[RMDB]
RNA sequence: GGGAACGACUCGAGUAGAGUCGAAAACAUGUGUACUUCGGUACACAUGAAAUGACCGCCAUUAUUGGGUAAGGCUACACGGACGGCCGGGUCAAAUGCCGAAAAUCGUUGCGUUCGCGCAACGAAAGUUCACAAACCAGUUCGCUGGUUUGUGAACAAAAGAAACAACAACAACAAC
Reactivity to DMS in 0.01 (KOAc 150mM, MgCl2 10mM, bicine 150mM(pH8.5), 24C), signal-to-noise 1, nucleotides 027 to 126: c000a000u010g000u000g010u000a000c000u000u020c180g020g000u000a000c000a000c000a010u000g000a020a010a080u010g010a030c000c040g030c020c000a130u020u000a170u020u010g000g000g010u030a090a090g020g010c010u000a100c110a170c020g000g010a030c050g000g000c000c030g000g000g000u000c050a050a050a000u020g000c000c000g010a170a130a070a100u000c000g040u020u000g010c010g030u000u020c170g050c010g090c000a000a000c000g010a000a000a040
Reactivity to 2A3 in 0.01 (KOAc 150mM, MgCl2 10mM, bicine 150mM(pH8.5), 24C), signal-to-noise 1, nucleotides 027 to 126: c000a000u010g000u000g000u000a010c020u020u070c200g040g000u000a000c000a000c000a000u010g000a040a010a010u100g000a010c020c010g190c000c030a130u200u170a170u280u300g110g050g000u190a140a090g040g000c000u040a030c100a030c030g020g040a000c020g000g000c010c000g000g010g010u020c000a000a000a050u110g000c000c030g000a080a010a010a030u010c000g000u020u000g000c000g000u000u030c220g010c000g000c050a010a010c010g010a000a000a000

An RNA of 177 nucleotides, treated with DMS and 2A3 and read out base by base. The DMS profile rests on 1,056 reads. In probing experiments dimethyl sulfate is read out at A N1 and C N3, which are open when not base-paired. The data come from the RNA Mapping Database (RMDB), library M2PK50. High 2A3 reactivity points to a flexible backbone, as in loops and unpaired stretches. DMS adducts were read by reverse transcription with MarathonRT.